Source: RMDB library OK1LIB, as collected in RNAgym. Structure probing data (2A3 and DMS) for a 177-nucleotide construct. The DMS profile rests on 6,206 reads.
RNA sequence: GGGAACGACUCGAGUAGAGUCGAAAAUUUAUAAAAGACAGAGCUACCGCAGUAGAAAGGACAUGCUGGGAUGCAGUAUUCGAGCCUAAUGUUCUAGGAUAUAAUCCACCUCACAAAUUUAGUACUAUCUAAAUCAUAAAUUCGUUUAUGAUUUAGAAAAAGAAACAACAACAACAAC
Reactivity to 2A3 in 0.01 (KOAc 150mM, MgCl2 10mM, bicine 150mM(pH8.5), 24C), signal-to-noise 4, nucleotides 027 to 126: u060u080u020a160u050a070a100a000a000g080a020c070a000g120a010g030c020u030a040c020c020g050c040a020g050u100a010g140a180a150a010g080g010a020c010a050u050g000c020u060g010g040g030a010u050g070c050a010g040u070a080u020u070c040g050a030g010c020c020u110a100a080u080g020u060u040c040u050a050g010g020a030u050a010u060a260a060u000c010c000a020c050c000u040c020a030c040a030a040a010u040u110u030a070g050u040a100c020u020a040
Reactivity to DMS in 0.01 (KOAc 150mM, MgCl2 10mM, bicine 150mM(pH8.5), 24C), signal-to-noise 4, nucleotides 027 to 126: u030u030u080a120u030a080a080a060a120g000a110c030a110g000a170g010c020u010a080c070c040g000c040a030g000u000a070g010a080a090a070g000g020a050c040a010u000g000c000u010g000g000g020a020u000g040c110a100g020u010a050u010u010c050g000a060g000c080c120u020a090a060u010g020u010u010c030u000a100g000g010a030u010a040u020a090a130u010c000c010a080c040c020u000c040a040c090a070a050a060u030u010u010a070g000u020a070c040u010a100

High DMS reactivity at an A or C suggests that its Watson-Crick edge is free. The RNA was probed in 150 mM KOAc, 10 mM MgCl2 and 150 mM bicine (pH 8.5) at 24 C. For DMS the reverse transcriptase was MarathonRT.